The record gives the reactivity of an RNA of 207 nucleotides to 2A3.
The 2A3 profile rests on 2,190 reads.
The RNA was probed in 150 mM KOAc, 10 mM MgCl2 and 150 mM bicine (pH 8.5) at 24 C.
The data come from the RNA Mapping Database (RMDB), library M2RFOK.
[RMDB]
RNA sequence: GGGAACGACUCGAGUAGAGUCGAAAAACUGCCAUACGUGGCAGAAACACGCCUUACCAGGACUAAACAGCGUGUCUAAAAAACAGUCCUUCAUACCUGAUCUGGAGGGUAGAUCAGGAAUACAAAAAAAAUCGGGUGAAGUUCGCUUCACCCGAAAGAUCAUAUCCCUCUUCGGAGGGAUAUGAUCAAAAGAAACAACAACAACAAC
Reactivity to 2A3 in 0.01 (KOAc 150mM, MgCl2 10mM, bicine 150mM(pH8.5), 24C), signal-to-noise 2, nucleotides 027 to 156: a010c000u010g000c000c000a020u020a060c210g060u030g000g000c020a000g000a000a020a000c000a000c000g010c000c000u020u060a020c030c060a020g000g000a000c000u030a120a020a030c010a020g000c020g000u000g000u020c100u030a000a000a010a000a000a000c020a000g000u000c050c000u020u090c070a080u080a200c000c000u020g000a000u000c000u040g050g060a090g070g030g030u060a020g000a000u000c010a000g000g000a000a010u050a040c070a020a030a010a040a020a000a030a170u010c000g000g010g000u000g000a000a000g010u030u120c130g020c140u000u000c000a000c000c000c000g000a000a000a000